[RMDB]
Chemical mapping of a 177-nucleotide RNA with 2A3 and DMS. It was measured as part of the RMDB library TTRDES. For 2A3, 3,145 sequencing reads were counted. 2A3 is a SHAPE reagent: it acylates the 2'-hydroxyl of flexible nucleotides of all four kinds. DMS adducts were read by reverse transcription with MarathonRT.
RNA sequence: GGGAACGACUCGAGUAGAGUCGAAAAGAUAUGGAAUAUCCAUGUCAAGACCUGGUAUCGGAAACGAUAUGCAGGUCGAAGACAACAUGGAGUAUUCCUAAGUCAAACUACUAGUUCGCUAGUAGAACAGAACAUAGUCGUUCGCGACUAUGUUCUGAAAAGAAACAACAACAACAAC
Reactivity to 2A3 in 0.01 (KOAc 150mM, MgCl2 10mM, bicine 150mM(pH8.5), 24C), signal-to-noise 2, nucleotides 027 to 126: g000a020u050a000u080g020g030a000a000u040a030u000c000c000a000u020g030u030c250a230a190g000a000c000c000u010g000g050u000a010u010c000g000g030a020a010a020c020g000a010u040a010u190g300c000a000g000g000u000c010g000a020a010g150a060c100a040a010c010a030u000g020g010a030g120u030a010u000u000c010c000u000a030a010g020u010c040a090a060a080c000u020a020c000u000a020g050u100u090c300g020c200u000a000g010u010a000g030a030a040
Reactivity to DMS in 0.01 (KOAc 150mM, MgCl2 10mM, bicine 150mM(pH8.5), 24C), signal-to-noise 2, nucleotides 027 to 126: g010a020u010a160u020g000g000a010a020u000a010u000c010c000a010u000g030u000c090a140a160g000a010c010c000u000g000g060u000a000u000c010g010g000a050a060a150c000g000a010u000a000u000g050c000a000g000g000u000c010g000a080a070g000a180c300a130a050c020a020u010g010g000a040g010u000a000u000u000c000c000u000a020a110g020u000c000a140a150a170c010u010a000c000u000a010g010u000u010c300g040c000u000a010g020u000a010g010a130a180